This 177-nucleotide RNA was probed chemically with DMS and 2A3.
[RMDB]
RNA sequence: GGGAACGACUCGAGUAGAGUCGAAAAUGGGGAUUGCUCUCGAGUGGAUGCAGGGCAAUCACUUCUAGCUUGUGUCCAGAACCAAUGUUCCUGCUCCAGGGGCGACAGAGAUCGUCGGGGUUCGCACUAUCCAUGCCGAUUUCGAUCGGCAUGGAUAAAAAGAAACAACAACAACAAC
Reactivity to DMS in 0.01 (KOAc 150mM, MgCl2 10mM, bicine 150mM(pH8.5), 24C), signal-to-noise 1, nucleotides 027 to 126: u030g000g030g010g000a040u000u000g000c030u000c050u000c070g010a120g020u020g020g010a050u020g010c160a040g000g010g020c020a030a070u000c060a050c100u010u010c070u000a080g000c070u000u010g010u010g010u000c050c000a030g020a080a120c060c090a040a120u000g020u000u000c000c010u000g000c020u020c040c060a120g000g000g010g010c030g020a040c010a130g020a140g010a060u010c060g000u010c030g010g000g000g000u000u000c060g000c100a180c180
Reactivity to 2A3 in 0.01 (KOAc 150mM, MgCl2 10mM, bicine 150mM(pH8.5), 24C), signal-to-noise 1, nucleotides 027 to 126: u140g000g000g000g020a000u000u070g000c010u000c040u030c110g040a080g080u160g180g060a120u210g000c070a030g010g000g060c000a000a010u050c030a010c010u110u000c010u030a070g050c070u030u170g060u040g040u010c000c050a050g060a020a020c000c020a110a090u110g030u110u040c010c000u010g110c020u110c020c000a050g000g090g000g080c020g030a010c010a050g210a040g010a270u030c020g000u000c000g000g070g050g000u080u040c050g040c060a060c040